[RMDB]
Structure probing data (2A3 and DMS) for a 177-nucleotide construct.
RNA sequence: GGGAACGACUCGAGUAGAGUCGAAAAGAGCCGCAGUUCGCUGCGGCUCAAAUGCGUGGAAGCUCUGCCUGGAGUUGAAGCGUUAAAACUUAAUCAGGCAAAAAACGUGGGAGUUCGCUCCCACGAAUCUGAUACUAAAGUUCGCUUUAGUAUCAGAAAAAGAAACAACAACAACAAC
Reactivity to 2A3 in 0.01 (KOAc 150mM, MgCl2 10mM, bicine 150mM(pH8.5), 24C), signal-to-noise 2, nucleotides 027 to 126: g000a000g000c000c000g060c000a010g020u040u100c160g000c100u000g010c000g000g000c000u000c000a000a000a000u030g000c000g000u030g010g010a020a010g000c010u000c030u060g000c030c000u010g000g000a000g000u020u020g020a030a000g010c000g010u010u050a060a210a020a000c020u060u070a030a050u140c000a000g000g000c000a020a100a050a000a080a040c020g000u000g000g000g000a030g010u060u110c200g080c120u000c020c000c010a010c000g000a000a010
Reactivity to DMS in 0.01 (KOAc 150mM, MgCl2 10mM, bicine 150mM(pH8.5), 24C), signal-to-noise 3, nucleotides 027 to 126: g020a020g030c000c000g050c000a030g030u000u000c180g050c010u000g000c010g020g010c010u000c000a010a070a050u010g000c000g010u000g020g000a300a040g010c010u010c010u020g000c020c010u000g000g000a020g000u000u000g010a300a220g000c010g030u000u000a040a030a080a080c150u000u000a070a080u000c010a010g000g010c000a010a040a060a050a100a090c010g000u000g000g000g010a010g010u000u010c200g000c010u000c000c000c000a000c020g000a010a030
Conditions: 150 mM KOAc, 10 mM MgCl2 and 150 mM bicine (pH 8.5), 24 C. For 2A3, 4,200 sequencing reads were counted.